[RMDB]
RNA sequence: GGGAACGACUCGAGUAGAGUCGAAAAUUGUUCGUGGGGUAAUGGCCUACGAAGGCGACGACGCGUAGCCGACCUGAGAGGGUGACCGGCCACACUGCGACUGAGACAUGGCGCAGACUCCUACGGGAAUAUUAAAGAUUUUCGAAUCUUUAAUAUUAAAAGAAACAACAACAACAAC
Reactivity to DMS in 0.01 (KOAc 150mM, MgCl2 10mM, bicine 150mM(pH8.5), 24C), signal-to-noise 8, nucleotides 027 to 126: u020u020g000u000u000c000g010u000g000g000g000g020u000a100a140u010g010g000c000c000u000a100c110g010a100a080g000g010c020g000a090c060g010a110c110g010c080g010u010a080g000c010c000g010a090c010c010u000g000a190g000a140g000g000g000u000g010a090c190c080g000g000c000c030a060c180a240c020u000g020c010g000a060c010u000g000a180g010a220c140a160u020g010g010c000g020c010a020g000a100c080u020c000c010u010a030c040g000g000g000
Reactivity to 2A3 in 0.01 (KOAc 150mM, MgCl2 10mM, bicine 150mM(pH8.5), 24C), signal-to-noise 4, nucleotides 027 to 126: u070u060g050u040u010c000g000u010g010g000g000g010u010a040a040u030g010g030c000c000u020a030c030g030a020a000g050g000c020g020a060c020g010a050c020g040c030g070u040a010g000c000c010g000a030c000c010u020g020a030g010a020g030g010g000u020g020a060c000c070g010g000c010c010a020c000a000c000u030g010c000g070a080c030u020g030a010g020a050c070a070u150g020g000c020g000c010a010g010a100c030u030c020c000u010a020c050g040g000g030
Background
The data come from the RNA Mapping Database (RMDB), library OK1LIB. Chemical mapping of a 177-nucleotide RNA with DMS and 2A3. The 2A3 profile rests on 5,991 reads. For DMS the reverse transcriptase was MarathonRT. The reactions ran in a buffer of 150 mM KOAc, 10 mM MgCl2 and 150 mM bicine (pH 8.5), at 24 C.